[RMDB]
RNA sequence: GGGAACGACUCGAGUAGAGUCGAAAAAUGUACCUGCUCUGGAUAUUGUGAUGGAGAUGGUUCCUGAUUUUAACCCAGCACAAAUCCGGGUACCUAAUAUAACACCCGACAAUUACUAUAGAGAUGGACGACCAUAAGAAUUCGUUCUUAUGGUCGUAAAAGAAACAACAACAACAAC
Reactivity to 2A3 in 0.01 (KOAc 150mM, MgCl2 10mM, bicine 150mM(pH8.5), 24C), signal-to-noise 3, nucleotides 027 to 126: a030u040g000u010a020c000c010u030g080c060u060c090u180g010g000a030u130a190u200u020g010u030g000a030u030g010g030a100g020a140u110g170g030u060u110c020c030u090g110a270u000u060u000u170a060a070c000c010c020a020g050c010a010c000a000a040a000u010c030c000g010g000g000u000a000c000c010u110a190a120u140a070u030a120a070c050a060c010c020c000g020a010c030a070a060u160u100a040c050u090a070u140a180g090a000g010a080u130g020g060
Reactivity to DMS in 0.01 (KOAc 150mM, MgCl2 10mM, bicine 150mM(pH8.5), 24C), signal-to-noise 5, nucleotides 027 to 126: a090u020g010u010a050c010c000u000g010c110u000c110u000g020g020a050u000a080u000u000g000u000g000a040u000g010g010a130g000a120u000g000g010u000u000c040c030u000g010a100u010u000u010u010a120a210c150c010c000a030g000c020a020c030a020a020a050u000c020c020g000g010g010u010a020c040c100u010a060a060u000a080u010a110a150c200a120c030c020c000g010a090c160a080a060u010u000a090c100u010a130u000a060g020a070g000a210u000g010g020

This 177-nucleotide RNA was probed chemically with 2A3 and DMS. Reactivities are given for positions 27 through 126. For DMS the reverse transcriptase was MarathonRT. The reactions ran in a buffer of 150 mM KOAc, 10 mM MgCl2 and 150 mM bicine (pH 8.5), at 24 C. Source: RMDB library OK2TRN, as collected in RNAgym. The DMS profile rests on 4,125 reads.